[RMDB]
Chemical mapping of a 207-nucleotide RNA with 2A3 and DMS. The reactions ran in a buffer of 150 mM KOAc, 10 mM MgCl2 and 150 mM bicine (pH 8.5), at 24 C. It was measured as part of the RMDB library OK3TST.

RNA sequence: GGGAACGACUCGAGUAGAGUCGAAAAAACAACAACAACAGCUUCAUGGGAGAAACACACGGAAGGUAGGGGGACUUCUAAUGGUCCAGACAGAUGAAAACUUCAACUACUAAUUGGAAGAUUUUGUGAAGUCAUUCUCAGAACAGCAGCAGAAAAACCUAAUAAAUAGCUUCGGCUAUUUAUUAGGAAAAGAAACAACAACAACAAC
Reactivity to 2A3 in 0.01 (KOAc 150mM, MgCl2 10mM, bicine 150mM(pH8.5), 24C), signal-to-noise 4, nucleotides 027 to 156: a000a000c080a030a000c030a020a010c010a020a010c020a020g040c010u080u070c030a060u060g010g030g000a040g030a030a090a000c040a010c020a010c050g020g020a040a030g020g010u070a030g030g010g000g030g010a010c010u020u000c010u040a100a100u130g050g000u000c020c000a000g030a030c050a010g050a030u040g050a020a030a040a020c020u060u060c030a060a010c010u150a020c010u060a100a120u120u050g050g030a040a020g000a090u080u060u110u090g040u030g030a010a010g000u010c000a010u080u010c040u010c030a010g020a030a010c020a030g030c020a000g030c030a000g120a050a050a070a040a050
Reactivity to DMS in 0.01 (KOAc 150mM, MgCl2 10mM, bicine 150mM(pH8.5), 24C), signal-to-noise 2, nucleotides 027 to 156: a040a040c020a060a080c060a080a090c050a070a080c030a080g010c030u010u000c050a100u000g010g000g020a100g020a100a090a070c050a100c080a080c070g000g020a090a050g000g000u000a080g000g020g030g020g010a130c020u000u020c040u000a090a110u010g020g010u000c000c030a120g010a120c050a060g010a060u000g000a040a050a080a060c000u000u000c040a060a090c030u000a100c080u000a020a130u000u000g030g010a070a040g000a140u010u000u000u020g000u000g020a050a040g000u000c000a060u010u000c020u020c010a110g030a040a080c030a070g010c020a080g040c010a120g000a070a040a030a070a100